An RNA of 177 nucleotides, treated with DMS and 2A3 and read out base by base. Values cover nucleotides 27 to 126. The 2A3 profile rests on 3,481 reads.
RNA sequence: GGGAACGACUCGAGUAGAGUCGAAAAUUGAUUAAAUUGUCUCUGAACGGCGAAACCAAAGACGUUAUCGUCCGUGAUUUCCAAAUGCACCCGUUCCGCCGCGAAGUUCAACACAUCGACUUCCAAGGAUAUGACUCGAGUUCGCUCGAGUCAUAUCAAAAGAAACAACAACAACAAC
Reactivity to DMS in 0.01 (KOAc 150mM, MgCl2 10mM, bicine 150mM(pH8.5), 24C), signal-to-noise 2, nucleotides 027 to 126: u010u000g040a070u020u040a080a100a100u000u000g000u000c030u010c020u010g030a120a050c020g020g010c020g000a000a030a010c000c040a060a080a170g020a090c170g000u000u010a050u000c000g000u030c000c030g000u000g000a080u000u010u000c100c040a070a090a070u040g000c000a050c030c100c030g010u000u010c020c020g030c020c030g000c020g040a070a040g010u030u000c040a050a010c160a070c100a090u020c040g010a030c070u010u000c000c040a130a130g020
Reactivity to 2A3 in 0.01 (KOAc 150mM, MgCl2 10mM, bicine 150mM(pH8.5), 24C), signal-to-noise 5, nucleotides 027 to 126: u070u070g050a020u070u080a080a090a040u140u090g100u020c030u000c020u120g110a100a010c010g010g000c020g010a030a010a010c050c030a160a180a070g110a100c150g020u090u070a160u240c030g140u100c020c010g030u020g040a040u040u060u000c020c000a000a140a020u120g020c030a060c000c010c000g030u110u020c010c070g010c000c030g040c030g020a060a020g000u060u080c030a090a050c050a020c010a130u060c060g020a010c030u080u030c000c010a000a040g140